[RMDB]
RNA sequence: GGGAACGACUCGAGUAGAGUCGAAAAUAGGUGAGUCUAGGAUCUCGUGUCGUCGAUCGACAUGGCUAGCGACACUAGACGUACUCAUGCUAGACCAUGAGUGGAUCGAGAGCUGGAUCGCAGUACGGUUCCGCUACAUCUUCGGAUGUAGCGGAACAAAAGAAACAACAACAACAAC
Reactivity to 2A3 in 0.01 (KOAc 150mM, MgCl2 10mM, bicine 150mM(pH8.5), 24C), signal-to-noise 2, nucleotides 027 to 126: u300a060g110g010u070g090a090g040u020c020u040a040g110g080a090u010c010u030c040g030u070g120u040c050g050u030c010g010a030u000c000g000a020c010a070u060g020g000c010u010a000g000c000g080a020c010a020c110u080a060g080a190c070g020u020a060c010u000c050a050u180g000c030u000a060g010a300c030c000a010u040g020a050g190u210g100g030a070u030c010g030a000g000a000g060c000u010g000g050a040u030c070g010c140a020g000u090a020c040g060
Reactivity to DMS in 0.01 (KOAc 150mM, MgCl2 10mM, bicine 150mM(pH8.5), 24C), signal-to-noise 2, nucleotides 027 to 126: u000a060g000g010u000g010a100g010u000c060u000a000g000g000a060u000c010u010c180g010u000g000u000c050g000u020c100g000a020u010c060g010a080c040a020u000g000g000c030u000a000g020c030g010a160c220a080c110u010a060g010a090c230g020u000a070c070u000c060a150u010g000c000u000a040g000a230c030c000a000u020g000a060g020u000g010g000a040u000c000g040a060g010a070g010c010u000g000g000a080u000c020g010c150a050g000u020a100c090g020